Conditions: 150 mM KOAc, 10 mM MgCl2 and 150 mM bicine (pH 8.5), 24 C. The record gives the reactivity of an RNA of 207 nucleotides to DMS and 2A3. DMS adducts were read by reverse transcription with MarathonRT. It was measured as part of the RMDB library M2RFPK.

[RMDB]
RNA sequence: GGGAACGACUCGAGUAGAGUCGAAAAUGAACGCUUUCGAAGGAAAGCUUGACCAGCUAAUCUUCUGCAACGCCAUUACGAGGACUGCCCUUAGAGGCUCAUGGCGAUAGGUCAUCCCGCCGGUCGGUUAAGAAUCAGCGAUUCGUCGCUGAUUCAAACAUAAGCUCUGCUUCGGCAGAGCUUAUGUAAAAGAAACAACAACAACAAC
Reactivity to DMS in 0.01 (KOAc 150mM, MgCl2 10mM, bicine 150mM(pH8.5), 24C), signal-to-noise 1, nucleotides 027 to 156: u010g020a070a100c060g020c020u000u000u000c030g000a220a120g010g010a040a080a030g010c010u010u010g000a070c050c050a140g010c060u000a050a130u010c060u000u010c030u000g000c030a070a110c020g000c010c010a060u000u000a110c080g020a180g000g010a110c070u000g020c010c020c010u010u000a160g000a120g060g120c010u000c060a050u000g020g030c020g020a130u000a040g030g000u000c050a160u000c010c010c000g000c050c010g010g020u010c010g030g020u010u000a070a140g020a030a010u000c000a000g010c000g050a090u000u000c300g000u000c020g040c000u000g000a000u000u000c000a000a100
Reactivity to 2A3 in 0.01 (KOAc 150mM, MgCl2 10mM, bicine 150mM(pH8.5), 24C), signal-to-noise 2, nucleotides 027 to 156: u130g040a080a010c050g030c160u080u160u090c080g070a070a000g000g040a210a030a020g010c010u010u020g000a020c000c000a000g020c010u020a050a070u090c020u180u030c030u110g060c060a080a030c000g000c000c020a010u080u140a090c100g030a110g050g100a100c090u060g010c000c010c000u030u120a130g050a130g070g000c010u020c030a030u000g000g000c000g050a080u110a050g030g020u000c020a050u020c030c020c020g000c010c050g020g040u070c000g000g020u120u130a200a010g010a010a000u010c000a000g000c000g000a010u040u090c170g030u010c000g150c010u000g000a000u000u000c000a010a000